[RMDB]
RNA sequence: GGGAACGACUCGAGUAGAGUCGAAAAGACGCUGAUGCGAUCGACUGUAAGAUAGAUAUACUGAGCAGACAGAUACGUACGGCAAGUAUCGUCGCCAGAAGUACAGUCGCAAAUUGCCGUACGAAGAGACGUAAAUAGGGUUCGCCCUAUUUACGUCAAAAGAAACAACAACAACAAC
Reactivity to 2A3 in 0.01 (KOAc 150mM, MgCl2 10mM, bicine 150mM(pH8.5), 24C), signal-to-noise 9, nucleotides 027 to 126: g090a020c040g000c070u180g090a150u300g040c030g060a080u040c010g010a010c000u010g020u030a050a040g080a210u170a090g140a050u150a070u060a230c010u010g020a020g060c050a080g030a010c000a030g060a030u080a110c000g030u030a000c010g010g000c010a020a010g030u040a030u120c060g000u000c000g000c010c000a030g030a110a000g050u010a010c000a000g000u010c010g010c070a050a090a030u010u010g000c000c010g010u020a030c020g020a060a020g080a020
Reactivity to DMS in 0.01 (KOAc 150mM, MgCl2 10mM, bicine 150mM(pH8.5), 24C), signal-to-noise 5, nucleotides 027 to 126: g020a120c040g000c010u020g020a160u010g030c010g020a160u020c000g010a030c000u000g000u000a020a070g010a120u050a100g010a210u010a110u040a300c020u000g000a080g000c020a160g020a030c030a130g030a100u010a070c010g000u010a020c000g000g000c020a010a030g000u000a020u000c070g020u010c010g000c000c020a040g000a060a150g000u000a000c020a000g010u000c000g000c200a040a080a110u000u000g010c010c010g000u000a100c100g000a170a090g010a200